[RMDB]
Source information: Source: RMDB library OK2TST, as collected in RNAgym. The record gives the reactivity of an RNA of 177 nucleotides to 2A3 and DMS. Values cover nucleotides 27 to 126.
RNA sequence: GGGAACGACUCGAGUAGAGUCGAAAACAGUGCCGGCAACCACCGGCAGGCAACCGGUGUGGUCAUCCACGUCGUCGCCGACGCGGCAGCACUAGGCGCUGCACCUGACCCACGCCUAUCCGGCCCGUCAUUUACUCCUCUUCGGAGGAGUAAAUGAAAAAGAAACAACAACAACAAC
Reactivity to 2A3 in 0.01 (KOAc 150mM, MgCl2 10mM, bicine 150mM(pH8.5), 24C), signal-to-noise 3, nucleotides 027 to 126: c020a020g090u000g040c000c000g000g020c090a130a050c020c030a000c010c020g020g000c000a000g010g010c020a000a050c030c020g010g010u020g030u050g020g040u110c070a140u100c040c020a020c020g040u030c010g050u090c060g070c130c040g030a020c020g010c020g050g010c020a020g020c040a050c090u140a120g090g050c040g010c060u020g000c030a050c020c020u030g060a070c020c000c050a020c030g020c010c000u070a100u080c030c000g000g020c010c010c010g050
Reactivity to DMS in 0.01 (KOAc 150mM, MgCl2 10mM, bicine 150mM(pH8.5), 24C), signal-to-noise 4, nucleotides 027 to 126: c070a090g020u000g010c000c010g000g010c070a110a180c260c210a100c000c010g000g010c030a000g000g010c100a070a090c070c030g000g010u000g000u000g000g010u000c150a110u020c100c020a030c020g000u000c010g020u010c250g020c220c010g010a030c060g010c060g000g030c080a070g010c040a070c100u010a080g000g010c090g000c040u010g000c070a070c110c090u010g000a070c040c050c050a110c120g000c030c030u010a040u000c060c010g000g000c020c010c030g010
The DMS profile rests on 3,475 reads. For 2A3, 4,066 sequencing reads were counted. The RNA was probed in 150 mM KOAc, 10 mM MgCl2 and 150 mM bicine (pH 8.5) at 24 C.